[RMDB]
RNA sequence: GGGAACGACUCGAGUAGAGUCGAAAAAGAAAUAGCGAUAAUCGUAAGAGAAAUGUCCUUCACAUAGCGCUACGCACAGAACUAUUAGUAGCGCAAUAGGUAUUGAAGGACAUUACCUGCCAAAAAAACAUAUUAACGUGUUCGCACGUUAAUAUGUAAAAGAAACAACAACAACAAC
Reactivity to 2A3 in 0.01 (KOAc 150mM, MgCl2 10mM, bicine 150mM(pH8.5), 24C), signal-to-noise 9, nucleotides 027 to 126: a000g120a020a060a030u150a030g030c020g040a040u160a130a100u180c030g030u070a080a020g060a010g030a090a030a010u010g000u000c000c000u010u020c010a030c010a050u090a030g020c000g010c000u020a000c010g050c060a070c020a170g210a250a040c070u060a120u300u130a060g000u000a000g000c000g000c000a000a020u030a010g020g010u100a070u110u120g000a000a000g000g000a000c000a000u000u000a000c010c000u050g060c010c030a070a110a020a000a010a000
Reactivity to DMS in 0.01 (KOAc 150mM, MgCl2 10mM, bicine 150mM(pH8.5), 24C), signal-to-noise 7, nucleotides 027 to 126: a100g010a080a080a070u000a060g010c030g010a140u010a060a120u000c040g000u000a080a100g000a110g000a070a050a010u000g000u000c000c000u000u000c000a040c160a090u000a100g010c010g000c000u000a010c010g020c260a160c300a110g000a070a080c170u010a100u010u000a110g010u000a000g010c000g010c000a020a020u010a060g010g020u010a080u000u000g010a010a010g000g000a000c000a000u000u000a050c040c030u000g010c060c110a000a000a030a070a050a050